Structure probing data (2A3 and DMS) for a 207-nucleotide construct. For DMS the reverse transcriptase was MarathonRT. 2A3 adducts were read by reverse transcription with SuperScript II with manganese. The 2A3 profile rests on 2,988 reads.
[RMDB]
RNA sequence: GGGAACGACUCGAGUAGAGUCGAAAACACCGUCAAGGACAUGAUGGAGGCGUUCCGAGCUGUGUUCUCGGGGCAGUCGCCGGAGGCGGCGAGCGCGGCGCAGCAGCAGAUCUCCGAUCAGAUGACUGCCCGCCACGAGCAGGAGAUCAAGGGCCUCAUCAAACACAACUUUCGAGUUGUGUUUGAUAAAAGAAACAACAACAACAAC
Reactivity to 2A3 in 0.01 (KOAc 150mM, MgCl2 10mM, bicine 150mM(pH8.5), 24C), signal-to-noise 3, nucleotides 027 to 156: c040a030c010c010g020u060c050a060a090g060g030a060c020a100u090g020a040u090g050g020a000g020g000c030g050u070u000c010c000g020a050g010c050u060g040u070g020u300u060c070u020c040g000g000g010g000c010a000g030u010c000g000c060c020g010g010a010g000g030c050g030g000c020g020a090g020c060g000c040g130g010c120g000c040a070g010c000a000g000c010a020g040a200u010c030u020c040c050g030a070u110c050a040g120a230u110g020a060c000u010g000c000c000c030g010c010c010a030c010g030a020g050c020a030g010g030a030g000a030u090c060a020a060g040g040g000c000c000u020c010
Reactivity to DMS in 0.01 (KOAc 150mM, MgCl2 10mM, bicine 150mM(pH8.5), 24C), signal-to-noise 2, nucleotides 027 to 156: c040a110c040c010g000u000c040a080a130g000g020a060c030a100u020g000a130u000g020g000a060g040g050c020g000u010u000c020c020g010a070g020c000u010g000u000g000u000u000c030u000c040g040g000g000g040c050a030g040u000c030g000c040c000g020g000a070g010g040c040g030g000c020g010a100g030c020g030c010g030g000c020g020c050a200g020c040a120g020c020a100g020a120u000c000u000c000c010g020a240u010c040a070g010a100u020g000a050c010u000g020c000c020c020g000c030c000a050c040g000a120g010c000a140g030g000a120g030a120u010c070a090a100g020g000g020c010c010u000c030